[RMDB]
RNA sequence: GGGAACGACUCGAGUAGAGUCGAAAAAAAGGCGACAUAUAGACCAGCAACGCCGAACCUAAAAGGCUUUUUUCGGCGAUGCCCAACUCGACUUUCUGCCCCGGAGCCAGCGGCUCCGCGCUUGGCACAUCAUUAACGUGUUCGCACGUUAAUGAUGAAAAGAAACAACAACAACAAC
Reactivity to 2A3 in 0.01 (KOAc 150mM, MgCl2 10mM, bicine 150mM(pH8.5), 24C), signal-to-noise 2, nucleotides 027 to 126: a000a000a000g060g010c040g010a020c120a040u300a030u140a160g060a070c090c030a010g010c010a000a040c010g000c000c010g000a020a020c000c000u090a090a150a130a130g040g000c030u230u100u010u010u030u000c000g010g040c010g000a000u010g010c040c010c020a000a070c040u020c030g060a040c040u020u070u040c030u060g030c000c020c000c010g000g040a010g010c010c010a100g170c080g200g000c000u000c030c000g020c060g000c020u060u070g010g020c020a010
Reactivity to DMS in 0.01 (KOAc 150mM, MgCl2 10mM, bicine 150mM(pH8.5), 24C), signal-to-noise 2, nucleotides 027 to 126: a010a030a020g010g000c010g020a050c280a120u000a160u020a140g000a100c180c140a130g010c010a100a080c030g020c000c020g020a020a080c110c010u000a020a070a060a110g010g000c300u010u000u010u000u000u000c000g000g000c000g020a040u000g000c020c060c070a090a070c190u000c040g020a030c020u000u000u000c110u010g020c000c020c020c030g020g020a010g020c010c010a110g020c140g010g020c040u000c020c010g000c050g010c110u010u000g020g020c080a200

An RNA of 177 nucleotides, treated with 2A3 and DMS and read out base by base. 2A3 adducts were read by reverse transcription with SuperScript II with manganese. The reactions ran in a buffer of 150 mM KOAc, 10 mM MgCl2 and 150 mM bicine (pH 8.5), at 24 C. The 2A3 profile rests on 1,369 reads. For DMS the reverse transcriptase was MarathonRT.